Background: An RNA of 177 nucleotides, treated with DMS and 2A3 and read out base by base. As a SHAPE reagent, 2A3 marks flexible, mostly unpaired nucleotides at the ribose 2'-OH. Reactivities are rounded to 0.1 and cut off at 0 and 3.

RNA sequence: GGGAACGACUCGAGUAGAGUCGAAAAGUAGCUAUUCGAGGCUAUGAUGACAUUGGGCGGAUCCCCCACUGGAGUCAGUGCACCGCCAAUGUUCGAGUAGAUGACCAUGCACAUGAGUAUGGGCACCUAAUAAUGGACCUUUCGAGGUCCAUUAUUAAAAAGAAACAACAACAACAAC
Reactivity to DMS in 0.01 (KOAc 150mM, MgCl2 10mM, bicine 150mM(pH8.5), 24C), signal-to-noise 9, nucleotides 027 to 126: g010u010a030g010c010u000a080u010u030c170g000a090g000g010c010u000a010u000g000a220u040g000a030c020a010u000u000g020g020g010c010g000g000a200u010c030c020c030c270c020a030c010u000g000g010a210g010u050c010a020g010u000g000c290a150c020c010g000c010c000a010a010u000g010u010u000c070g010a180g010u010a040g010a140u010g000a080c000c010a010u000g000c010a150c250a150u060g010a110g000u000a020u000g000g000g010c040a060c070c020
Reactivity to 2A3 in 0.01 (KOAc 150mM, MgCl2 10mM, bicine 150mM(pH8.5), 24C), signal-to-noise 7, nucleotides 027 to 126: g020u020a010g010c020u040a080u130u220c110g060a080g080g000c010u010a020u060g120a180u220g010a000c000a010u020u020g160g100g050c020g010g030a140u130c010c000c010c010c000a020c010u040g050g110a180g210u300c020a000g000u000g010c030a020c050c000g000c000c010a000a010u020g020u050u070c040g020a020g040u070a030g030a070u070g020a020c000c010a010u010g000c030a070c040a290u240g070a030g040u020a010u010g020g000g000c020a030c010c010
Conditions: 150 mM KOAc, 10 mM MgCl2 and 150 mM bicine (pH 8.5), 24 C.